[RMDB]
This 177-nucleotide RNA was probed chemically with DMS and 2A3. The reactions ran in a buffer of 150 mM KOAc, 10 mM MgCl2 and 150 mM bicine (pH 8.5), at 24 C. It was measured as part of the RMDB library OK2TRN. Values cover nucleotides 27 to 126. The 2A3 profile rests on 18,988 reads.

RNA sequence: GGGAACGACUCGAGUAGAGUCGAAAACGCCUGAUCGGUACUGGCCGUACUGUGAUCUCUCAUCGAGCGCGUGGCCGAGAUAGCGCGCGCUGCGUACCGGAUCCAGCGCGGAUCGGCCUGCAUCGCGGGAAGCCAUAAUAUUCGUAUUAUGGCUUCCAAAAGAAACAACAACAACAAC
Reactivity to DMS in 0.01 (KOAc 150mM, MgCl2 10mM, bicine 150mM(pH8.5), 24C), signal-to-noise 9, nucleotides 027 to 126: c230g010c020c020u000g010a040u000c020g020g010u000a040c040u010g010g020c130c090g000u000a050c040u000g010u010g010a040u000c020u000c100u010c120a210u010c050g000a060g010c080g000c020g020u010g010g020c000c010g010a070g000a140u010a120g020c060g010c000g010c020g010c010u010g000c100g010u000a080c190c300g000g000a070u000c060c020a040g010c030g010c030g000g000a070u000c020g010g000c270c010u000g010c090a060u000c020g020c260g000
Reactivity to 2A3 in 0.01 (KOAc 150mM, MgCl2 10mM, bicine 150mM(pH8.5), 24C), signal-to-noise 8, nucleotides 027 to 126: c070g040c000c020u030g020a040u040c010g010g020u040a080c020u100g080g020c020c020g010u010a020c010u040g130u190g120a040u010c050u010c020u040c070a170u120c040g030a010g020c070g000c030g090u050g130g000c020c030g030a060g030a110u270a050g120c140g000c010g000c000g000c080u030g020c030g060u050a090c030c080g050g020a040u030c010c000a010g010c010g010c020g030g010a080u030c000g010g000c000c000u010g010c020a030u040c020g010c060g090